[RMDB]
RNA sequence: GGGAACGACUCGAGUAGAGUCGAAAACCUCCGUGGUUCGCCACGGAGGAAAAAACCGUAGGAAAGUGGAUGUCUAUCAAUGAUGUUCGAAAGAGUUGAGAUAAACAUCGUAACAUCUUUCCUAAACGGAAAAAAGCACGAUGUUCGCAUCGUGCAACUUUACCCGUUGAUUCGUCAACGGGUAAAGAAAAGAAACAACAACAACAAC
Reactivity to DMS in 0.01 (KOAc 150mM, MgCl2 10mM, bicine 150mM(pH8.5), 24C), signal-to-noise 1, nucleotides 027 to 156: c010c000u000c020c000g070u020g000g040u010u010c300g040c000c000a000c010g000g000a010g000g000a010a010a030a050a060a050c050c000g090u000a060g020g000a010a030a050g040u000g040g040a010u020g000u000c010u020a080u010c010a060a140u010g010a080u010g000u000u030c030g010a150a130a140g010a030g020u000u010g000a140g010a040u000a010a000a000c000a010u000c020g040u000a170a140c080a050u000c000u000u000u000c010c010u000a000a040a060c000g030g000a010a040a090a060a190a140g020c020a020c000g030a040u000g030u010u020c300g030c020a010u000c000g010u010g000c030a000a000
Reactivity to 2A3 in 0.01 (KOAc 150mM, MgCl2 10mM, bicine 150mM(pH8.5), 24C), signal-to-noise 3, nucleotides 027 to 156: c000c000u000c020c000g020u040g020g070u080u100c270g050c070c000a000c000g000g010a000g000g010a000a000a000a030a030a000c020c010g040u020a020g040g010a000a000a020g010u040g010g020a020u020g030u000c030u050a020u020c020a090a150u170g070a050u100g150u190u110c100g060a140a100a040g060a030g010u040u090g060a050g000a090u030a010a070a000c000a000u010c000g010u070a050a020c010a140u130c040u000u000u000c000c000u020a020a090a070c030g030g070a030a040a000a000a080a000g000c000a010c010g010a000u010g030u100u170c250g010c150a000u000c000g000u000g000c020a000a000
This 207-nucleotide RNA was probed chemically with DMS and 2A3.
Reactivities are given for positions 27 through 156.
Conditions: 150 mM KOAc, 10 mM MgCl2 and 150 mM bicine (pH 8.5), 24 C.